[RMDB]
RNA sequence: GGGAACGACUCGAGUAGAGUCGAAAAGACGUGGACAGUUCGUUGGUACCGUCGAUCCGGAUAGUCCUGCUGAGAGAGGAGGAUUAAUCACUGGUGACCGAAUCUUUGCUGUCAAUGGUCACUCGAAGCAUUAGUCCCGAUUCGUCGGGACUAAUGCAAAAGAAACAACAACAACAAC
Reactivity to DMS in 0.01 (KOAc 150mM, MgCl2 10mM, bicine 150mM(pH8.5), 24C), signal-to-noise 2, nucleotides 027 to 126: g010a020c050g020u020g000g030a010c020a020g010u000u010c220g040u010u000g020g010u000a150c150c010g000u000c060g010a170u000c060c000g040g010a060u000a020g010u000c010c010u000g000c030u000g000a160g010a150g010a050g010g000a080g000g030a040u000u000a050a040u000c050a210c080u000g040g000u000g010a020c030c010g010a090a040u010c050u000u010u000g020c000u010g030u000c080a090a140u000g000g010u020c000a030c010u000c060g000a110a130
Reactivity to 2A3 in 0.01 (KOAc 150mM, MgCl2 10mM, bicine 150mM(pH8.5), 24C), signal-to-noise 1, nucleotides 027 to 126: g000a020c040g070u110g020g020a000c000a060g030u090u240c060g020u120u100g000g040u010a060c010c020g000u020c050g030a000u000c000c010g050g000a020u030a000g030u030c010c000u070g050c010u060g030a040g030a030g050a020g300g060a030g020g000a020u020u070a020a120u070c020a030c090u140g010g010u010g030a000c000c030g050a070a060u010c020u120u240u210g070c010u050g010u050c000a000a030u100g000g000u000c000a030c020u060c050g090a120a050
The record gives the reactivity of an RNA of 177 nucleotides to DMS and 2A3.
The 2A3 profile rests on 917 reads.
For 2A3 the reverse transcriptase was SuperScript II with manganese.
Source: RMDB library OK2TRN, as collected in RNAgym.